[RMDB]
RNA sequence: GGGAACGACUCGAGUAGAGUCGAAAACAGGACAUAAAUGUUUGGGACAUUGCGAAUAUGAUAAAUUCGCAAAUUUAAGUUAUAAUGCCAUGCACAAACCGAAGGAGGAUGAAUGGUUUGAAAGAGAUAUUAGAGAAAUUAGAACAGAAAAUAUCCCCAUGAGUCCUCAAUUCGUUGAGGACUCAUGAAAAGAAACAACAACAACAAC
Reactivity to DMS in 0.01 (KOAc 150mM, MgCl2 10mM, bicine 150mM(pH8.5), 24C), signal-to-noise 1, nucleotides 027 to 156: c040a130g020g020a020c050a140u000a020a080a080u000g010u000u000u010g000g020g020a120c000a160u010u000g000c000g020a050a010u000a100u000g040a300u000a110a080a080u000u000c000g010c000a000a020a020u000u000u000a040a110g000u000u000a220u040a030a050u000g030c070c070a130u000g000c030a120c090a020a090a080c080c040g020a080a110g020g030a090g020g010a030u000g020a020a130u010g030g020u000u000u000g020a100a100a160g000a140g000a100u010a080u000u000a060g000a140g010a050a100a210u000u010a000g010a010a160c060a030g000a000a050a050a070u010a070u000c020c050c030
Reactivity to 2A3 in 0.01 (KOAc 150mM, MgCl2 10mM, bicine 150mM(pH8.5), 24C), signal-to-noise 2, nucleotides 027 to 156: c030a000g120g090a000c020a040u150a170a150a040u090g020u070u020u060g060g000g030a040c080a040u060u000g000c010g000a010a000u110a140u240g070a040u130a200a220a030u010u010c010g000c050a040a000a000u030u030u060a080a000g030u030u110a040u120a160a140u130g020c000c020a030u060g050c040a020c020a100a050a030c000c040g030a020a020g000g010a030g040g010a030u030g020a060a030u060g020g030u030u020u060g040a070a100a020g000a010g020a020u020a030u160u200a130g000a000g050a030a150a020u180u110a050g000a050a000c030a020g030a020a030a000a000u140a020u000c000c000c000